[RMDB]
RNA sequence: GGGAACGACUCGAGUAGAGUCGAAAAUGUCGUGCAGGUUCCGACUGCCUGACGCCAGAAGCUUUCGUGUCGCUUUUGGCUAUGUCAUGUUUUGACUCACGGUCAAGGCGCAGGCCAGGACACGGGAUCAAGGGAUGCGCUUCGGUGCGUCCCUUGAAAAAGAAACAACAACAACAAC
Reactivity to DMS in 0.01 (KOAc 150mM, MgCl2 10mM, bicine 150mM(pH8.5), 24C), signal-to-noise 9, nucleotides 027 to 126: u030g010u000c040g020u020g020c060a070g000g000u020u020c080c050g000a120c070u020g000c010c010u000g000a060c080g000c010c000a020g000a010a010g010c010u000u010u020c020g020u010g000u000c040g010c010u000u000u000u000g000g000c010u010a020u030g010u010c060a090u030g010u010u000u000u000g000a010c000u010c160a130c180g000g000u000c020a040a030g000g000c010g020c250a030g000g010c020c120a120g000g010a020c010a010c000g000g010g010a150
Reactivity to 2A3 in 0.01 (KOAc 150mM, MgCl2 10mM, bicine 150mM(pH8.5), 24C), signal-to-noise 9, nucleotides 027 to 126: u110g020u020c010g020u050g040c020a030g010g050u100u090c040c040g040a020c030u030g010c000c000u020g020a020c030g010c010c000a020g010a020a000g000c020u030u080u100c030g010u020g020u030c010g020c050u030u030u030u030g010g000c010u030a110u110g040u020c040a030u110g080u050u050u030u040g010a010c010u030c120a060c140g070g010u020c020a020a040g010g000c010g000c040a020g030g030c020c020a040g030g030a000c000a010c000g010g020g020a060